[RMDB]
RNA sequence: GGGAACGACUCGAGUAGAGUCGAAAAUACACCGCUAUACAACCCGCAAGAACGAUAUAGGCCAAUAUUUUGGUGAGUUCACCAGCUCAGCCUUUACUGUGCCUCCUGGUGAAACCGGGCAGUGGGACCUUACGAGUGGGUUCGCCCACUCGUAAGGAAAAGAAACAACAACAACAAC
Reactivity to 2A3 in 0.01 (KOAc 150mM, MgCl2 10mM, bicine 150mM(pH8.5), 24C), signal-to-noise 1, nucleotides 027 to 126: u070a030c100a030c050c000g010c010u060a060u040a210c050a020a080c050c040c000g000c030a060a050g020a190a000c030g050a050u070a030u060a200g090g110c030c010a110a000u140a240u210u250u120u000g000g000u010g090a030g020u010u030c030a020c050c000a010g000c020u080c140a010g030c010c010u090u080u080a280c300u170g070u130g000c010c010u110c000c010u030g030g000u000g000a010a000a010c060c010g000g020g000c030a010g010u030g010g020g000a040
Reactivity to DMS in 0.01 (KOAc 150mM, MgCl2 10mM, bicine 150mM(pH8.5), 24C), signal-to-noise 1, nucleotides 027 to 126: u010a100c080a110c010c030g000c090u000a140u000a090c150a130a070c070c020c020g000c100a080a180g000a090a040c160g000a090u000a050u010a090g030g000c000c000a040a060u000a090u010u000u000u000g030g020u010g000a160g010u000u000c000a010c040c000a030g000c150u000c090a140g010c010c000u000u000u050a100c120u000g000u050g040c010c080u000c300c000u000g000g010u010g000a000a020a000c050c070g000g000g010c070a030g020u000g030g000g030a240